Chemical mapping of a 207-nucleotide RNA with DMS and 2A3.
It was measured as part of the RMDB library M2RFPK.
RNA sequence: GGGAACGACUCGAGUAGAGUCGAAAAACAUAGGCCAUGCUUACGAGCAUGGCCUAUGACGAAUCUCAAGCAAUCAAGCAUUCUCCUUCUAUUGCAACACUGAGGAGCUUACGAGCUCCUCAGUGAAAAAAGAGAGUAAUGUUCGCAUUACUCUCAAUCUAUGUUAUCUCUUCGGAGAUAACAUAGAAAAAGAAACAACAACAACAAC
Reactivity to DMS in 0.01 (KOAc 150mM, MgCl2 10mM, bicine 150mM(pH8.5), 24C), signal-to-noise 1, nucleotides 027 to 156: a150c000a000u000a000g000g000c010c010a000u000g000c000u000u000a090c300g080a050g040c000a000u010g010g020c020c000u000a000u010g010a110c160g010a110a090u010c040u000c050a060a250g000c090a080a120u010c110a010a100g010c030a130u000u000c000u010c020c080u000u000c070u010a110u010u000g000c000a170a240c010a030c010u000g050a030g010g010a070g010c000u000u010a120c240g030a070g010c000u000c000c000u010c010a010g020u000g000a000a020a000a060a080a060g000a030g010a050g000u000a000a010u010g010u000u010c290g040c010a000u000u000a000c000u010c010u010c000a010a070
Reactivity to 2A3 in 0.01 (KOAc 150mM, MgCl2 10mM, bicine 150mM(pH8.5), 24C), signal-to-noise 2, nucleotides 027 to 156: a000c000a000u000a010g000g030c010c000a000u010g040c030u120u100a140c290g130a050g000c000a000u000g000g000c010c000u000a000u000g000a000c000g050a070a110u030c020u010c070a020a030g010c010a020a050u050c010a050a020g020c030a150u150u060c050u130c030c020u100u140c040u120a070u030u060g020c050a120a060c010a010c040u020g000a010g000g000a000g000c000u090u060a090c110g030a030g000c010u020c000c000u000c000a000g000u000g000a010a000a000a000a000a010g000a000g000a000g000u000a000a000u000g050u050u090c200g040c060a000u000u000a000c000u000c000u000c000a000a020